Notes:
The record gives the reactivity of an RNA of 177 nucleotides to DMS. Values cover nucleotides 27 to 126. The RNA was probed in 150 mM KOAc, 10 mM MgCl2 and 150 mM bicine (pH 8.5) at 24 C. It was measured as part of the RMDB library OK2TST.
RNA sequence: GGGAACGACUCGAGUAGAGUCGAAAAUUGUGACUGGAAGCAACCACCAAGGUCCAAGGCGAUCCAGAGAAUCCCAGGAAAAGCUCUUUGAAGGCCUACAGAUCUAUUGUUGUGAGCCCUUCACCAAUGUCAUUGUGCAAUUCGUUGCACAAUGACAAAAAGAAACAACAACAACAAC
Reactivity to DMS in 0.01 (KOAc 150mM, MgCl2 10mM, bicine 150mM(pH8.5), 24C), signal-to-noise 1, nucleotides 027 to 126: u000u000g020u000g020a010c060u000g000g000a090a180g010c060a200a080c050c100a090c070c030a100a140g000g000u000c140c060a010a130g010g020c070g000a080u000c040c170a030g010a070g000a220a050u000c030c080c050a140g000g000a000a070a120a120g000c070u000c030u000u000u020g000a080a050g000g000c080c090u000a120c030a140g000a050u050c130u020a120u000u000g060u020u000g020u000g000a070g000c090c090c020u000u000c080a120c110c110a090a080

For DMS the reverse transcriptase was MarathonRT. The DMS profile rests on 523 reads.